[RMDB]
RNA sequence: GGGAACGACUCGAGUAGAGUCGAAAACGCGCGUUGCAGCGCCAGAAGCAAGAGACAGAUAAAUCAAAAACCAGCUUUAGCAGGAUCGCAAGCGCCAUCGAUCCCACGAUCUCAAAAAUGGCCAACUUGCGCAAAGCUACAGAAGAACUUGAUAAGGUAUCAACCUAGCUUUCGAGCUAGGUUGAUAAAAAGAAACAACAACAACAAC
Reactivity to 2A3 in 0.01 (KOAc 150mM, MgCl2 10mM, bicine 150mM(pH8.5), 24C), signal-to-noise 1, nucleotides 027 to 156: c010g000c000g000c030g100u110u190g110c100a080g000c010g010c000c000a070g000a130a020g070c030a010a060g010a000g030a040c020a010g060a030u080a130a120a010u080c070a040a010a000a060a060c030c040a000g050c010u030u040u010a010g000c030a030g000g110a090u120c000g010c000a000a010g020c000g000c040c000a010u030c070g020a030u020c010c040c010a000c020g060a050u010c050u030c150a030a100a070a060a000u000g000g000c010c000a000a020c000u000u000g000c000g000c000a010a010a010g000c010u030a010c000a000g030a080a000g030a040a060c040u060u070g050a040u120a090a080g000g000
Reactivity to DMS in 0.01 (KOAc 150mM, MgCl2 10mM, bicine 150mM(pH8.5), 24C), signal-to-noise 1, nucleotides 027 to 156: c050g020c070g030c030g030u000u000g040c060a140g010c030g080c020c030a030g000a160a200g050c010a080a040g030a170g040a130c000a080g040a100u000a020a060a150u000c070a040a110a090a130a120c000c050a050g020c010u000u000u000a040g000c040a130g030g040a140u000c000g000c000a060a040g010c010g040c050c010a140u000c050g000a170u000c030c000c100a130c210g030a160u000c020u000c080a040a050a090a040a070u030g040g000c060c030a030a020c010u000u000g000c040g010c050a080a140a150g000c010u000a140c030a060g000a070a040g020a050a040c100u010u000g000a070u000a110a130g040g020